[RMDB]
RNA sequence: GGGAACGACUCGAGUAGAGUCGAAAACCUCCUGUUCGCAGGAGGAAAAAUCCUAAGUCGGGAGACGCGAAGUCAGCUUGGAUUUAGGUCGGAAACGACCUUGUCAGCUGCCGAGCGUCGAAGAACGAUAUGGAAAAAAGGCUAGUUCGCUAGCCAAUACUUUCCUAGAGUUCGCUCUAGGAAAGUAAAAAGAAACAACAACAACAAC
Reactivity to DMS in 0.01 (KOAc 150mM, MgCl2 10mM, bicine 150mM(pH8.5), 24C), signal-to-noise 2, nucleotides 027 to 156: c000c000u000c000c000u000g040u000u010c300g050c020a030g000g090a010g030g030a020a020a060a060a090u000c000c000u000a080a300g040u010c050g000g020g000a230g000a020c000g000c000g010a220a070g010u000c020a010g000c010u000u020g040g020a030u020u000u000a020g050g020u010c010g000g010a140a140a300c020g020a010c000c020u000u000g000u000c020a100g000c010u010g000c000c010g000a300g010c000g000u000c000g000a080a150g000a160a090c000g000a060u000a190u000g020g000a010a050a080a080a060a190g000g000c000u000a020g020u000u000c300g040c020u010a000g000c010c000a030a110
Reactivity to 2A3 in 0.01 (KOAc 150mM, MgCl2 10mM, bicine 150mM(pH8.5), 24C), signal-to-noise 3, nucleotides 027 to 156: c000c000u010c000c000u050g030u070u110c300g040c070a000g040g010a000g010g040a040a060a000a040a020u010c010c000u020a110a030g010u000c020g010g020g010a060g010a010c010g010c020g060a130a000g030u060c010a010g000c040u160u270g190g000a080u300u250u120a030g000g000u000c000g030g030a080a080a080c020g000a000c010c000u000u000g000u010c000a000g010c010u000g000c000c000g010a020g010c000g000u000c000g000a010a010g010a000a010c020g000a010u060a060u140g050g060a100a080a010a030a000a100g000g000c000u020a010g030u090u060c270g010c130u010a000g040c000c000a010a010
Structure probing data (DMS and 2A3) for a 207-nucleotide construct.
Conditions: 150 mM KOAc, 10 mM MgCl2 and 150 mM bicine (pH 8.5), 24 C.
Source: RMDB library RNAMAK, as collected in RNAgym.